[RMDB]
RNA sequence: GGGAACGACUCGAGUAGAGUCGAAAAAUGCCCUUGGCGAUCGCCAGGCGCAGCGCCUUGUCGGCGAGGAUCGACCCAGGCGCACCGUUGAGGGUGAAGUGAUACCAGCUGGGCCCGGGGGCGCGCCCCUGGUAUUGACCUUCGGGUCAAUACCAGGAAAAGAAACAACAACAACAAC
Reactivity to 2A3 in 0.01 (KOAc 150mM, MgCl2 10mM, bicine 150mM(pH8.5), 24C), signal-to-noise 1, nucleotides 027 to 126: a000u070g030c030c000c000u000u030g060g020c060g010a110u110c080g010c020c020a010g000g020c020g010c010a030g050c010g000c010c000u040u080g080u080c030g000g090c050g100a240g130g070a160u040c020g000a120c020c000c020a010g000g000c010g000c030a020c060c000g030u060u140g090a130g010g060g010u050g040a070a010g060u080g070a040u070a260c030c040a030g070c020u060g060g110g000c020c030c020g000g010g040g000g000c040g000c010g030c020c010
Reactivity to DMS in 0.01 (KOAc 150mM, MgCl2 10mM, bicine 150mM(pH8.5), 24C), signal-to-noise 3, nucleotides 027 to 126: a090u010g000c000c010c010u000u000g010g010c020g000a050u010c070g010c000c030a190g000g020c110g020c120a150g020c050g020c020c010u000u000g010u010c160g010g010c000g030a060g010g000a120u000c020g030a080c030c040c060a080g020g010c050g030c080a010c120c020g030u010u010g030a080g000g020g040u010g020a160a080g000u010g020a110u010a080c090c060a190g000c040u000g010g000g000c090c030c050g010g000g010g020g000c090g000c150g010c040c040